Chemical mapping of a 177-nucleotide RNA with DMS and 2A3. The RNA was probed in 150 mM KOAc, 10 mM MgCl2 and 150 mM bicine (pH 8.5) at 24 C. For DMS the reverse transcriptase was MarathonRT. For DMS, 2,261 sequencing reads were counted.
RNA sequence: GGGAACGACUCGAGUAGAGUCGAAAACGGCGGUGCUGGCCGUGGCUGUGGUCGUCGCAUUCCUGACGACGGGCUGUAUCCGGUGGUCUACGCAGUCGCGGCCCGUUGUUAACGGCCCCGCUGCCGCGCCGUGAUAGGAGUUCGCUCCUAUCACGGCAAAAGAAACAACAACAACAAC
Reactivity to DMS in 0.01 (KOAc 150mM, MgCl2 10mM, bicine 150mM(pH8.5), 24C), signal-to-noise 2, nucleotides 027 to 126: c060g000g010c010g010g010u000g010c110u000g010g000c000c020g000u000g000g010c070u000g070u000g030g010u000c000g030u000c010g020c180a190u000u000c090c080u030g000a050c000g000a010c040g010g000g010c060u000g000u010a150u010c060c090g000g000u010g010g030u010c050u010a280c100g010c020a050g020u010c010g040c020g000g000c010c020c080g000u000u000g000u000u010a070a140c110g010g010c060c040c070c000g000c040u000g010c060c050g000c180
Reactivity to 2A3 in 0.01 (KOAc 150mM, MgCl2 10mM, bicine 150mM(pH8.5), 24C), signal-to-noise 2, nucleotides 027 to 126: c010g010g000c010g010g010u050g030c060u040g070g020c010c000g030u000g000g000c020u000g000u020g100g000u010c010g000u000c000g000c100a180u140u220c060c060u060g030a010c030g000a000c030g030g020g030c030u040g050u170a140u120c030c040g130g030u100g010g000u020c020u040a060c060g000c000a030g000u020c000g010c020g010g030c010c010c000g040u050u100g050u040u110a080a020c030g040g000c010c000c000c000g070c040u040g080c040c040g030c010